RNA sequence: GGGAACGACUCGAGUAGAGUCGAAAAUACGUUCGGUUAAGAACAUACCAUAUGGUCCUGUUGUGUUUGGUUAUGAGGUUCAGAUAGAUCUACCUGAAAACCUUAACAUUCCACUAAACGGCCUACCGAGUUGCCUAUUAUUCGUAAUAGGCAACUCAAAAGAAACAACAACAACAAC
Reactivity to DMS in 0.01 (KOAc 150mM, MgCl2 10mM, bicine 150mM(pH8.5), 24C), signal-to-noise 3, nucleotides 027 to 126: u010a110c140g000u000u000c010g010g030u010u030a130a160g000a000a040c030a090u000a130c040c020a100u000a070u010g030g000u000c050c070u020g020u000u000g000u000g010u000u010u010g010g010u000u000a050u020g000a050g000g020u000u000c030a010g020a040u010a040g010a200u020c170u010a020c000c000u000g000a050a080a030a030c010c020u000u000a030a080c050a100u000u000c090c040a030c070u000a040a040a080c180g000g010c020c010u010a120c210c090
Reactivity to 2A3 in 0.01 (KOAc 150mM, MgCl2 10mM, bicine 150mM(pH8.5), 24C), signal-to-noise 2, nucleotides 027 to 126: u130a000c070g010u010u020c020g020g190u220u200a180a040g020a030a000c010a040u040a050c010c010a040u050a140u210g020g000u060c030c070u120g030u100u010g040u050g010u020u060u030g050g000u060u010a080u260g020a010g000g000u050u030c010a020g000a050u000a070g140a150u070c080u160a150c020c000u000g030a030a050a030a090c000c000u010u020a020a000c000a040u060u000c030c020a020c020u000a060a040a020c020g000g030c020c020u000a050c040c100
Conditions: 150 mM KOAc, 10 mM MgCl2 and 150 mM bicine (pH 8.5), 24 C. An RNA of 177 nucleotides, treated with DMS and 2A3 and read out base by base. In probing experiments dimethyl sulfate is read out at A N1 and C N3, which are open when not base-paired. For 2A3, 1,344 sequencing reads were counted. The data come from the RNA Mapping Database (RMDB), library OK2TST.